[RMDB]
RNA sequence: GGGAACGACUCGAGUAGAGUCGAAAACCCUCAGCGUCAGCCUAACUCUUCGAAAAGAGACCUCCAUCGCACCGCAGUGAUUCUGUGCAAUCUUGCGGCCCAAUCACGGGAGAGAACGCUGAGCGUAAUGUUAACGUUAUUUCGAUAACGUUAACAUAAAAGAAACAACAACAACAAC
Reactivity to 2A3 in 0.01 (KOAc 150mM, MgCl2 10mM, bicine 150mM(pH8.5), 24C), signal-to-noise 9, nucleotides 027 to 126: c000c000c000u000c020a010g000c010g030u020c020a050g050c020c020u100a130a120c010u020c010u100u100c150g160a120a100a050a020g060a020g020a080c000c020u030c020c010a110u090c050g020c060a020c010c000g000c010a040g070u030g170a020u020u000c050u180g300u160g090c120a000a010u000c000u010u010g000c000g010g020c010c020c010a040a050u150c040a030c100g030g010g000a020g010a000g010a030a000c010g000c000u010g000a010g000c010g040u130a100
Reactivity to DMS in 0.01 (KOAc 150mM, MgCl2 10mM, bicine 150mM(pH8.5), 24C), signal-to-noise 9, nucleotides 027 to 126: c010c000c000u000c040a040g010c000g000u010c060a120g010c090c080u010a110a140c020u000c000u000u010c200g020a110a090a090a040g000a040g010a190c090c020u000c020c040a090u020c080g020c180a210c000c010g010c000a010g000u030g000a010u000u000c020u020g020u020g010c120a020a010u000c000u000u000g000c010g000g000c070c050c040a110a070u030c140a100c120g000g010g000a060g000a080g010a110a040c100g000c000u000g010a020g010c110g010u010a100
The record gives the reactivity of an RNA of 177 nucleotides to 2A3 and DMS. Source: RMDB libraries RFM100 and RFMREP, as collected in RNAgym. For 2A3 the reverse transcriptase was SuperScript II with manganese. DMS adducts were read by reverse transcription with MarathonRT.